[RMDB]
RNA sequence: GGGAACGACUCGAGUAGAGUCGAAAAAGAGACGAUUUAUUGUCGUUUCAUUGUGUGGAUUUUGGACAAUAUAUUCUUCCUAUAAGAUUAGAUAGAAAGACAUUUUUGCCGCAAUCUAUAAGAAGAGGAAUAGGCGACGGAUGGAUGAUACGCAAAGCCGAGAGUGAAUGUUCGCAUUCACUCUCGGAAAAGAAACAACAACAACAAC
Reactivity to 2A3 in 0.01 (KOAc 150mM, MgCl2 10mM, bicine 150mM(pH8.5), 24C), signal-to-noise 1, nucleotides 027 to 156: a010g040a020g010a030c050g030a070u000u070u060a070u280u270g010u000c000g000u000u000u000c110a110u150u100g030u040g000u060g000g020a030u000u000u060u080g000g000a050c070a060a000u030a010u010a030u200u050c000u000u000c010c020u050a030u010a130a020g010a060u050u130a050g050a080u100a090g030a030a110a000g070a040c030a060u000u040u040u170u210g030c040c010g030c000a040a080u000c010u140a030u050a180a030g060a040a040g000a040g020g050a000a000u050a060g000g130c030g000a050c070g020g020a020u000g000g000a000u000g030a010u020a020c020g000c050a020a100a000g000